[RMDB]
RNA sequence: GGGAACGACUCGAGUAGAGUCGAAAAUAAAACAGUGCGUGGUAGCACUACCAUGACCAUGUUUCGGCACAAGGUCAGCCGAGUACAGCUUCGCCUGUACUCAGCGAACAACAACAACAACAAAAAAUCAGUUACAAAGUUUCGACUUUGUAACUGAAAAAGAAACAACAACAACAAC
Reactivity to 2A3 in 0.01 (KOAc 150mM, MgCl2 10mM, bicine 150mM(pH8.5), 24C), signal-to-noise 2, nucleotides 027 to 126: u120a000a040a020a010c040a000g010u010g040c020g040u080g070g150u170a040g020c040a020c030u020a030c000c030a050u080g010a010c000c000a050u030g020u000u060u080c170g110g000c010a010c030a110a060g030g000u030c010a020g000c010c030g010a000g000u010a000c000a000g020c050u160u270c160g050c030c000u000g020u000a000c010u000c000a010g000c000g010a010a010c010a010a000c020a000a020c000a010a000c020a060a010c030a020a060a000a030a000a080
Reactivity to DMS in 0.01 (KOAc 150mM, MgCl2 10mM, bicine 150mM(pH8.5), 24C), signal-to-noise 3, nucleotides 027 to 126: u010a050a040a160a130c160a040g030u010g020c010g050u010g000g040u000a140g020c060a030c040u000a120c040c030a200u000g010a020c010c020a170u000g000u010u000u000c130g040g010c050a080c110a080a070g010g000u000c020a110g050c020c030g010a000g000u000a000c010a010g000c010u000u020c300g020c190c000u010g010u010a000c000u010c000a030g000c020g000a090a100c030a020a030c010a010a050c040a030a040c070a080a020c080a030a020a150a040a040a100

Record summary:
Structure probing data (2A3 and DMS) for a 177-nucleotide construct. It was measured as part of the RMDB library M2PK90. For 2A3, 2,881 sequencing reads were counted. 2A3 adducts were read by reverse transcription with SuperScript II with manganese. Values cover nucleotides 27 to 126.